[RMDB]
This 177-nucleotide RNA was probed chemically with DMS.
For DMS the reverse transcriptase was MarathonRT.
It was measured as part of the RMDB library OK2TST.
Conditions: 150 mM KOAc, 10 mM MgCl2 and 150 mM bicine (pH 8.5), 24 C.

RNA sequence: GGGAACGACUCGAGUAGAGUCGAAAAAAUCGGCUCAUGGGCGACGGCGAACAUGGUCGCCCACACCGGGUGGCUGUGGAUCACGCUGCCAAUGUCGUCGAAUGCGCGAUAGCACGCCAGGUGUAGGACCCUAAUAGGGCUUCGGCCCUAUUAGGGUAAAAGAAACAACAACAACAAC
Reactivity to DMS in 0.01 (KOAc 150mM, MgCl2 10mM, bicine 150mM(pH8.5), 24C), signal-to-noise 2, nucleotides 027 to 126: a070a070u010c020g020g040c020u000c010a070u000g020g000g000c020g000a020c000g000g000c180g000a060a090c060a040u000g010g060u000c020g050c000c010c000a010c170a040c210c160g030g000g020u000g010g000c050u000g000u000g000g000a080u000c050a110c010g000c020u010g030c050c000a070a070u000g020u010c130g010u000c010g020a050a160u000g000c040g000c020g010a100u020a030g020c010a090c030g040c000c020a120g000g000u000g000u000a080g010g020